An RNA of 177 nucleotides, treated with DMS and 2A3 and read out base by base. Conditions: 150 mM KOAc, 10 mM MgCl2 and 150 mM bicine (pH 8.5), 24 C. For DMS the reverse transcriptase was MarathonRT.

[RMDB]
RNA sequence: GGGAACGACUCGAGUAGAGUCGAAAAGAUAUGGACUACGUACCCGUCUAUGAAGUGGCUCGGAAACGAGCCAUGGAGACGGUACGGUAGUCCUAAGUCAAACGCACAUGCCUUCGGGCAUGUGCGACCAAUAGUAGAACUUCGGUUCUACUAUUGGAAAAGAAACAACAACAACAAC
Reactivity to DMS in 0.01 (KOAc 150mM, MgCl2 10mM, bicine 150mM(pH8.5), 24C), signal-to-noise 7, nucleotides 027 to 126: g010a050u000a300u010g000g000a020c000u000a020c000g010u000a010c130c070c150g020u000c000u010a270u010g000a180a210g000u000g000g000c000u000c000g010g000a110a090a220c010g010a000g010c000c010a000u000g000g000a020g010a020c010g010g000u000a000c000g010g020u010a010g010u000c000c000u010a010a070g010u000c040a120a130a280c020g010c000a000c000a010u000g010c000c000u000u010c260g020g000g000c000a000u000g000u000g010c000g000a020
Reactivity to 2A3 in 0.01 (KOAc 150mM, MgCl2 10mM, bicine 150mM(pH8.5), 24C), signal-to-noise 5, nucleotides 027 to 126: g040a010u090a050u180g000g010a000c000u010a000c020g030u010a030c180c240c140g010u010c010u060a300u090g010a040a000g010u010g000g000c000u000c000g020g010a060a090a060c000g020a000g000c000c010a010u000g000g000a000g000a000c020g000g000u010a000c010g000g020u010a010g000u010c000c000u000a050a010g020u000c050a140a040a070c010g000c000a000c000a010u020g020c000c000u090u150c300g090g000g000c000a000u010g000u000g000c000g000a000